Source: RMDB library OK3TST, as collected in RNAgym. Structure probing data (DMS and 2A3) for a 207-nucleotide construct. For 2A3, 6,122 sequencing reads were counted. Reactivities are rounded to 0.1 and cut off at 0 and 3. DMS adducts were read by reverse transcription with MarathonRT. Reactivities are given for positions 27 through 156. The RNA was probed in 150 mM KOAc, 10 mM MgCl2 and 150 mM bicine (pH 8.5) at 24 C.

RNA sequence: GGGAACGACUCGAGUAGAGUCGAAAAUUGGUGGAAGAUCCUUAAACGAAGCAAAAGAAACGGCUGCCAUGUUUGGACACAUUGAAUGCGCACAACACUGUUUUGAACUGCAGUCUUAUGUCAUGGACGCAUUGAAUGCGGACGACGCUGAUUAAAGCAAUCUAGGAAAGUUCGCUUUCCUAGAUUGAAAAGAAACAACAACAACAAC
Reactivity to DMS in 0.01 (KOAc 150mM, MgCl2 10mM, bicine 150mM(pH8.5), 24C), signal-to-noise 4, nucleotides 027 to 156: u000u000g000g040u000g020g000a120a110g010a090u000c030c020u010u000a110a050a140c060g010a120a130g010c040a090a090a090a150g000a090a110a090c070g000g010c030u000g010c040c050a090u010g020u010u000u000g020g000a200c060a030c040a060u010u000g000a050a100u000g000c030g040c050a080c050a050a080c060a050c020u000g000u000u000u010u010g000a090a120c130u010g000c000a030g000u010c030u000u000a070u000g020u000c110a160u000g020g000a080c010g000c010a050u010u010g010a040a300u000g010c030g020g000a100c050g010a060c060g020c060u000g000a150u000u000a060a090a160g000
Reactivity to 2A3 in 0.01 (KOAc 150mM, MgCl2 10mM, bicine 150mM(pH8.5), 24C), signal-to-noise 6, nucleotides 027 to 156: u070u030g010g000u030g040g010a070a050g030a100u050c020c000u070u100a080a070a010c060g050a070a010g010c030a050a070a040a060g090a070a120a010c060g060g000c020u030g020c030c050a070u120g050u050u040u070g040g000a020c000a000c010a070u020u070g110a090a020u080g010c020g000c020a010c010a080a040c020a030c040u030g050u040u060u070u150g110a110a040c030u050g000c000a010g010u000c030u100u170a120u130g050u050c040a040u110g070g010a020c010g000c010a000u020u080g140a080a040u050g000c010g010g000a020c040g010a010c010g000c040u050g050a130u110u130a040a010a000g040